About this RNA
The record gives the reactivity of an RNA of 207 nucleotides to DMS and 2A3. Reactivities are rounded to 0.1 and cut off at 0 and 3. The 2A3 profile rests on 904 reads. The data come from the RNA Mapping Database (RMDB), library M2RFPK. Conditions: 150 mM KOAc, 10 mM MgCl2 and 150 mM bicine (pH 8.5), 24 C.
RNA sequence: GGGAACGACUCGAGUAGAGUCGAAAAAUAGUUAAGGUUGCGCUUGCCUAUUUAGGCAUACUUCUCAGGAUGGCGCGUUGCAGUCCAACAAGAUCCAGGGACUGUACAGAAUUUUCCUAUGCCUCGAAAAACAUUCGCUUGUUCGCAAGCGAAUGAAUCAAUCUGAGUACUUCGGUACUCAGAUUGAAAAAGAAACAACAACAACAAC
Reactivity to DMS in 0.01 (KOAc 150mM, MgCl2 10mM, bicine 150mM(pH8.5), 24C), signal-to-noise 1, nucleotides 027 to 156: a150u000a050g030u000u010a180a060g010g010u010u020g020c050g010c100u000u000g060c010c000u020a240u020u010u000a010g050g020c020a070u000a040c010u000u000c080u000c120a150g020g000a110u010g020g000c010g030c130g010u000u010g000c010a040g030u000c030c000a080a150c030a060a110g030a060u010c080c050a210g020g010g010a020c020u000g010u000a070c060a190g010a150a090u000u000u000u000c010c070u000a070u010g000c000c010u010c030g000a090a080a080a130a200c000a040u000u000c000g020c000u000u010g020u000u010c240g010c050a010a040g000c030g000a000a000u000g000a020a100
Reactivity to 2A3 in 0.01 (KOAc 150mM, MgCl2 10mM, bicine 150mM(pH8.5), 24C), signal-to-noise 2, nucleotides 027 to 156: a000u220a010g060u070u080a130a010g040g040u050u110g000c010g000c020u040u160g030c000c010u070a200u150u290u220a000g000g000c010a000u040a060c030u120u110c120u050c140a000g060g000a090u090g010g000c000g010c020g000u010u030g000c000a000g000u000c000c000a060a030c030a300a020g120a210u080c120c020a050g010g020g010a000c000u000g010u000a010c020a000g180a160a090u030u090u040u060c000c000u020a020u080g010c000c000u040c050g010a070a060a000a050a030c000a000u000u000c010g000c000u040u010g060u110u110c230g030c110a000a000g000c000g000a000a000u010g000a000a010
In probing experiments dimethyl sulfate is read out at A N1 and C N3, which are open when not base-paired.